[RMDB]
RNA sequence: GGGAACGACUCGAGUAGAGUCGAAAAUUGUUACAGCACCCAUAGGAAACUAAUACACAGAGGAUGUAAAUCUUAACAGUAUUGAGUGUUCUAUGAACACAGUAUAUGUCUCCAUUUAUUUAGAUCAGAUUUACGCCUACUUCGGUAGGCGUAAAUCAAAAGAAACAACAACAACAAC
Reactivity to DMS in 0.01 (KOAc 150mM, MgCl2 10mM, bicine 150mM(pH8.5), 24C), signal-to-noise 1, nucleotides 027 to 126: u050u030g020u000u000a050c050a130g020c130a090c080c060c010a040u020a110g000g000a050a060a020c020u020a080a010u000a010c020a300c300a120g000a040g020g000a040u000g020u010a110a150a020u000c000u000u000a090a110c170a140g010u000a000u000u000g010a070g030u000g000u000u000c020u030a120u010g000a040a050c090a020c190a020g010u000a000u000a040u000g000u010c050u000c020c110a210u000u000u000a080u000u000u010a050g020a130u000c140a090
The record gives the reactivity of an RNA of 177 nucleotides to DMS. For DMS, 579 sequencing reads were counted. Reactivities are given for positions 27 through 126. It was measured as part of the RMDB library OK2TRN. Conditions: 150 mM KOAc, 10 mM MgCl2 and 150 mM bicine (pH 8.5), 24 C. For DMS the reverse transcriptase was MarathonRT.